The record gives the reactivity of an RNA of 177 nucleotides to DMS and 2A3. The 2A3 profile rests on 23,733 reads.
[RMDB]
RNA sequence: GGGAACGACUCGAGUAGAGUCGAAAAGAUAUGGACCAAUCAUUACCAGCCGAAGAACGCUUUCGGAAACGAAAGCGGGAGGCUGAAUGAGUUGGUCCUAAGUCAAAAUCCCUAGUUCGCUAGGGAAUCUAACUGUUAUGUUCGCAUAACAGUUAGAAAAAGAAACAACAACAACAAC
Reactivity to DMS in 0.01 (KOAc 150mM, MgCl2 10mM, bicine 150mM(pH8.5), 24C), signal-to-noise 7, nucleotides 027 to 126: g000a040u000a300u010g000g010a020c000c010a010a020u010c000a010u000u000a160c300c020a020g010c010c000g010a150a160g010a150a180c010g000c000u000u000u000c000g020g000a110a090a180c000g000a000a010a000g010c000g000g000g010a050g020g020c010u010g010a020a000u010g000a050g020u010u000g010g000u000c000c000u000a010a070g000u010c040a130a090a150a170u000c000c000c000u000a010g010u010u010c240g010c010u000a010g000g000g000a030a040
Reactivity to 2A3 in 0.01 (KOAc 150mM, MgCl2 10mM, bicine 150mM(pH8.5), 24C), signal-to-noise 3, nucleotides 027 to 126: g040a030u100a050u200g000g000a000c000c000a010a000u020c000a000u020u090a240c150c020a020g010c000c000g130a300a040g020a060a010c000g000c000u000u000u000c010g030g000a080a060a030c010g000a000a000a000g000c000g000g000g020a000g000g000c010u020g010a000a000u030g010a040g300u030u030g010g000u000c000c000u000a010a000g030u010c020a010a000a040a300u030c000c000c000u010a010g010u040u080c300g000c170u000a000g010g000g000a000a050